[RMDB]
This 177-nucleotide RNA was probed chemically with 2A3 and DMS. It was measured as part of the RMDB library 15KREP. 2A3 is a SHAPE reagent: it acylates the 2'-hydroxyl of flexible nucleotides of all four kinds.
RNA sequence: GGGAACGACUCGAGUAGAGUCGAAAAGGCUAAGUCCGUUCAACAAGAUCUUGACGUUAUUUUGCCUGGUGAGUUUUCCAAGAAGCAGUUAGGACUGCUCCAACCUACUGACAAUUCUACAACUGUUUACACAUUAUGCGUUCGCGCAUAAUGUGUAAAAAGAAACAACAACAACAAC
Reactivity to 2A3 in 0.01 (KOAc 150mM, MgCl2 10mM, bicine 150mM(pH8.5), 24C), signal-to-noise 1, nucleotides 027 to 126: g040g000c020u010a000a050g020u010c010c000g060u120u170c020a010a020c030a120a100g030a230u030c020u040u060g000a000c020g020u150u100a020u030u060u020u080g050c000c000u010g000g050u040g040a150g000u030u000u030u050c000c020a000a010g050a030a010g050c000a000g020u000u080a050g050g020a040c020u030g000c000u020c020c000a020a020c000c010u030a060c010u000g040a090c080a060a100u130u000c040u070a000c010a150a050c030u010g040u090u030
Reactivity to DMS in 0.01 (KOAc 150mM, MgCl2 10mM, bicine 150mM(pH8.5), 24C), signal-to-noise 1, nucleotides 027 to 126: g000g000c020u000a020a110g000u000c300c080g000u020u030c030a000a090c160a080a120g000a080u020c080u000u000g060a050c030g020u000u000a060u000u000u000u000g000c010c020u000g000g030u020g020a190g010u000u000u000u000c020c020a100a150g020a050a100g000c000a020g010u010u010a040g020g000a080c100u000g070c020u010c000c060a160a090c040c080u000a010c070u000g000a100c170a020a190u000u000c030u020a060c160a060a100c080u000g000u000u000
Reactivities are rounded to 0.1 and cut off at 0 and 3. Values cover nucleotides 27 to 126. For 2A3 the reverse transcriptase was SuperScript II with manganese. The reactions ran in a buffer of 150 mM KOAc, 10 mM MgCl2 and 150 mM bicine (pH 8.5), at 24 C. For DMS, 593 sequencing reads were counted.